RNA sequence: GGGAACGACUCGAGUAGAGUCGAAAAAAUUGAUAGUGAUGGGAGCUGGCACAUUUUACGAGACGUCAGUAUUAGUGAAUAUGCACCUGAGAUAUCCAAGCACAACACCAACGCGGAUAGUGUCAAACGGGUAGAUCAAAUUCGUUUGAUCUACCCGAAAAGAAACAACAACAACAAC
Reactivity to DMS in 0.01 (KOAc 150mM, MgCl2 10mM, bicine 150mM(pH8.5), 24C), signal-to-noise 2, nucleotides 027 to 126: a070a090u000u000g000a110u030a100g020u020g000a060u010g000g010g010a110g010c020u000g010g000c040a070c070a040u000u000u000u000a070c120g010a180g000a090c050g000u000c140a100g020u000a060u000u000a060g010u000g010a070a020u000a040u000g000c010a070c050c050u000g000a130g050a050u000a090u000c000c050a120a120g010c060a050c030a080a050c090a080c030c040a010a100c100g000c080g050g020a120u000a040g000u000g020u000c070a020a060a120
Reactivity to 2A3 in 0.01 (KOAc 150mM, MgCl2 10mM, bicine 150mM(pH8.5), 24C), signal-to-noise 1, nucleotides 027 to 126: a000a090u210u100g020a060u020a150g070u030g030a110u050g010g030g000a050g110c040u040g030g040c010a080c050a070u050u070u030u140a080c070g010a030g000a040c040g050u080c050a020g050u070a070u020u110a040g080u010g050a000a040u140a030u050g030c000a000c000c000u100g020a000g000a060u110a020u000c050c000a130a000g080c040a030c000a140a090c000a030c040c020a020a050c030g000c020g020g010a060u030a110g040u030g020u010c010a100a000a000